[RMDB]
RNA sequence: GGGAACGACUCGAGUAGAGUCGAAAAGAAAGAAAGAAGAAUCACCAGGAGGCAAGGAUCCUCAACUACGUUAUGCGGGCACCUUGAGUUGAGAGGAGCUAGUGGUGCGCCCGGCCUGGAGAUCAAAACACGACAGGCGGGUUCGCCCGCCUGUCAAGAAUGUAUUUUAGUUCGCUAAAAUACAUUCAAAAGAAACAACAACAACAAC
Reactivity to 2A3 in 0.01 (KOAc 150mM, MgCl2 10mM, bicine 150mM(pH8.5), 24C), signal-to-noise 2, nucleotides 027 to 156: g060a020a060a000g070a060a080a030g080a060a000g020a050a020u040c010a020c030c010a010g010g010a030g050g000c010a030a160g020g010a010u010c000c000u000c000a010a010c010u300a090c060g160u220u060a020u180g040c010g010g020g010c000a010c040c010u090u270g010a010g010u000u010g010a010g010a010g020g000a000g000c020u030a010g090u020g050g020u000g000c020g020c000c010c000g020g010c000c000u010g000g020a050g000a020u040c010a000a120a040a040c090a010c110g020a000c000a000g010g000c050g020g010g030u030u060c040g030c000c000c030g030c000c000u000g000u000c000a000a000
Reactivity to DMS in 0.01 (KOAc 150mM, MgCl2 10mM, bicine 150mM(pH8.5), 24C), signal-to-noise 1, nucleotides 027 to 156: g000a130a100a140g000a080a080a100g010a080a110g000a130a080u000c000a090c030c010a020g000g010a140g010g010c010a080a170g000g000a080u000c020c020u000c010a100a040c030u000a030c110g000u000u010a090u000g030c020g030g010g020c060a090c040c010u010u020g000a060g010u010u030g010a170g000a060g030g000a040g010c080u010a060g010u000g030g000u010g010c080g010c000c010c030g000g000c030c020u040g000g010a140g010a050u000c050a070a030a030a100c060a100c080g000a050c010a010g000g040c000g010g020g030u000u000c230g020c020c010c030g000c000c010u000g010u000c000a010a030
The record gives the reactivity of an RNA of 207 nucleotides to 2A3 and DMS.
It was measured as part of the RMDB library M2RFPK.
The reactions ran in a buffer of 150 mM KOAc, 10 mM MgCl2 and 150 mM bicine (pH 8.5), at 24 C.
2A3 adducts were read by reverse transcription with SuperScript II with manganese.